[RMDB]
RNA sequence: GGGAACGACUCGAGUAGAGUCGAAAAUAAGACUUUAAGGGUCGUAGUCGAAGCGAAAGCGAGUCUGAAUAGGGCGAAUUAGUUAGUGGGGGCAGACGCGAAACUUGGUGAUCUACCCAUGGCCAGGAGAUAUAGAAGCGUUCGCGCUUCUAUAUCUAAAAGAAACAACAACAACAAC
Reactivity to DMS in 0.01 (KOAc 150mM, MgCl2 10mM, bicine 150mM(pH8.5), 24C), signal-to-noise 3, nucleotides 027 to 126: u020a170a180g010a000c020u000u000u000a080a180g000g000g000u000c010g000u000a070g020u010c030g010a090a080g000c040g010a100a090a080g000c060g000a040g000u000c010u010g010a140a080u030a110g040g020g000c030g000a090a100u040u050a060g010u010u000a080g010u010g000g010g020g000g020c050a060g000a060c050g000c050g000a070a070a110c080u010u020g010g020u010g000a060u010c080u000a110c030c010c010a070u020g030g010c040c080a080g010g000
Reactivity to 2A3 in 0.01 (KOAc 150mM, MgCl2 10mM, bicine 150mM(pH8.5), 24C), signal-to-noise 3, nucleotides 027 to 126: u170a060a020g010a030c020u050u050u020a050a050g090g000g000u000c020g000u000a010g150u100c020g030a090a000g000c010g040a070a000a000g020c010g050a030g000u000c040u040g030a130a100u160a230g010g000g000c030g040a010a070u130u000a070g140u070u060a040g010u120g020g030g000g050g000c050a040g050a080c030g010c000g040a080a060a040c070u040u060g000g000u060g070a110u000c010u020a080c000c000c020a040u050g010g000c010c010a040g020g110
This 177-nucleotide RNA was probed chemically with DMS and 2A3.
For DMS the reverse transcriptase was MarathonRT.
The reactions ran in a buffer of 150 mM KOAc, 10 mM MgCl2 and 150 mM bicine (pH 8.5), at 24 C.
For 2A3, 1,404 sequencing reads were counted.
It was measured as part of the RMDB libraries RFM100 and RFMREP.
In probing experiments dimethyl sulfate is read out at A N1 and C N3, which are open when not base-paired.